The data come from the RNA Mapping Database (RMDB), library OK2TRN. Chemical mapping of a 177-nucleotide RNA with DMS. Conditions: 150 mM KOAc, 10 mM MgCl2 and 150 mM bicine (pH 8.5), 24 C. For DMS, 757 sequencing reads were counted.
RNA sequence: GGGAACGACUCGAGUAGAGUCGAAAACACCAGCGGCAGGUCGGCUUCAUUACGGCCUUCGUCGUCAUAACGCUUCAGCACGGCAGAGGCGAGGUAGAGCUGGCUUAAAAUAUCCCCCAGACGGGCCAGCAGGAGUUGUAUUCGUACAACUCCUGCUAAAAGAAACAACAACAACAAC
Reactivity to DMS in 0.01 (KOAc 150mM, MgCl2 10mM, bicine 150mM(pH8.5), 24C), signal-to-noise 1, nucleotides 027 to 126: c130a070c030c030a140g020c030g010g020c030a010g020g040u010c020g020g000c060u000u010c210a120u010u030a080c050g020g010c020c000u010u000c070g040u010c010g040u030c140a150u030a030a100c180g030c040u000u020c120a060g030c000a090c120g010g010c020a070g000a070g000g000c020g020a130g060g000u000a070g000a060g010c000u000g020g000c000u000u000a000a050a090a220u000a180u010c020c010c000c030c040a170g010a070c170g010g000g020c030c130